Conditions: 150 mM KOAc, 10 mM MgCl2 and 150 mM bicine (pH 8.5), 24 C. Structure probing data (DMS and 2A3) for a 170-nucleotide construct. For 2A3, 3,958 sequencing reads were counted. The DMS profile rests on 5,397 reads.
RNA sequence: GGGAACGACUCGAGUAGAGUCGAAAAAGUCCAUGGCUGCAACUCGUGGAGCGACUUGCGUCAUUGGUACUACAAAGUUCUACGGUGGCUGGGAUUUCAUGCUUAAAACAUUGUACAAAGAUGUUGAUACGGUAGGCGUUCGCGCCUACCAAAAGAAACAACAACAACAAC
Reactivity to DMS in 0.01 (KOAc 150mM, MgCl2 10mM, bicine 150mM(pH8.5), 24C), signal-to-noise 2, nucleotides 027 to 129: a030g070u000c030c040a050u020g000g060c040u100g000c030a030a010c180u000c080g000u050g070g020a150g030c010g040a070c090u020u000g030c040g020u000c040a020u000u060g000g000u090a050c040u030a120c130a060a080a170g070u000u000c010u040a000c120g000g050u030g000g090c010u080g040g000g000a040u000u000u000c140a000u000g040c070u000u030a070a150a050a020c080a070u050u040g000u030a130c220a000a020a060g100a030u050g010u040u020g020a210u040a080c110
Reactivity to 2A3 in 0.01 (KOAc 150mM, MgCl2 10mM, bicine 150mM(pH8.5), 24C), signal-to-noise 3, nucleotides 027 to 129: a000g080u000c000c000a030u010g030g040c080u170g010c100a060a000c040u000c000g040u050g120g120a180g010c010g060a050c020u030u010g010c050g000u000c000a010u060u160g060g000u100a010c000u020a010c060a010a080a010g010u010u070c000u040a030c060g000g010u000g000g000c070u010g020g000g020a020u040u100u080c010a060u100g000c010u030u110a020a020a020a020c000a020u060u080g020u120a030c000a050a110a050g000a040u070g010u020u040g000a030u040a110c090